Structure probing data (DMS and 2A3) for a 170-nucleotide construct. Source: RMDB library 15KLIB, as collected in RNAgym. The RNA was probed in 150 mM KOAc, 10 mM MgCl2 and 150 mM bicine (pH 8.5) at 24 C.
[RMDB]
RNA sequence: GGGAACGACUCGAGUAGAGUCGAAAAGAAGAGUAAAUCCUACGGGAAUCCCCCGGUUCCCCUUAUGUCCAGCCCCUCCCCGGUCCGAGAGAAGGGGGACUCCGGGACUCCUUGCAUGUUGGGGACGAACCAUUCACCUUCGGGUGAAUGAAAAGAAACAACAACAACAAC
Reactivity to DMS in 0.01 (KOAc 150mM, MgCl2 10mM, bicine 150mM(pH8.5), 24C), signal-to-noise 4, nucleotides 027 to 129: g040a080a050g000a050g020u030a030a140a120u010c000c030u020a070c040g040g010g020a040a050u040c080c020c010c060c270g000g000u000u000c000c010c000c030u020u050a070u060g020u030c030c040a110g020c060c030c020c010u040c010c030c010c040g030g030u000c030c070g020a090g030a130g000a060a070g030g020g010g030g020a040c000u000c160c290g000g000g000a050c080u000c050c000u040u030g060c090a040u050g000u020u010g000g000g000g000a020c120g010a080a100c100
Reactivity to 2A3 in 0.01 (KOAc 150mM, MgCl2 10mM, bicine 150mM(pH8.5), 24C), signal-to-noise 5, nucleotides 027 to 129: g030a030a000g050a010g020u070a010a080a080u090c020c020u040a010c050g010g000g060a020a070u090c020c010c000c000c000g020g000u020u020c020c010c010c010u070u200a110u230g090u040c050c040a040g030c020c010c000c010u040c020c000c000c010g010g000u030c030c050g060a060g020a030g020a100a060g000g000g000g000g000a020c030u000c010c000g010g000g020a000c010u020c000c000u020u120g080c100a070u030g010u030u050g010g000g000g000a010c010g010a010a020c000